[RMDB]
Chemical mapping of a 177-nucleotide RNA with 2A3 and DMS.
RNA sequence: GGGAACGACUCGAGUAGAGUCGAAAAGAUAUGGAUGACAGACAUGAACUACGAUCGGAAACGAUCGUCGUUCAACAGCUGUAUCCUAAGUCAAAGUAUGAUUGCUCGUUCGCGAGCAAUCAUACAAGUGCUUCCAUAUCUUCGGAUAUGGAAGCACAAAAGAAACAACAACAACAAC
Reactivity to 2A3 in 0.01 (KOAc 150mM, MgCl2 10mM, bicine 150mM(pH8.5), 24C), signal-to-noise 1, nucleotides 027 to 126: g010a040u080a040u120g020g010a020u110g250a040c000a000g050a060c030a110u090g000a000a000c010u000a000c010g010a000u010c010g010g030a120a080a010c020g020a010u000c010g020u000c000g020u000u000c010a020a010c040a000g050c000u020g000u000a000u000c020c000u000a150a020g040u020c090a170a050a050g000u010a030u020g030a000u020u000g000c000u010c020g000u080u110c300g050c010g140a010g000c000a010a000u010c000a010u000a000c000a000a010
Reactivity to DMS in 0.01 (KOAc 150mM, MgCl2 10mM, bicine 150mM(pH8.5), 24C), signal-to-noise 1, nucleotides 027 to 126: g010a060u020a300u010g010g010a040u000g010a000c000a010g000a030c080a260u000g020a010a000c000u000a000c000g000a000u010c000g000g010a100a130a140c000g010a000u010c000g020u000c070g000u000u000c000a020a070c250a160g020c040u000g000u000a020u000c010c020u000a070a110g010u020c050a110a080a250g000u000a000u000g010a020u000u010g010c000u010c000g010u000u020c300g040c060g000a010g010c010a000a010u000c030a000u010a000c000a110a090
2A3 adducts were read by reverse transcription with SuperScript II with manganese. Conditions: 150 mM KOAc, 10 mM MgCl2 and 150 mM bicine (pH 8.5), 24 C. The 2A3 profile rests on 2,105 reads. The DMS profile rests on 838 reads.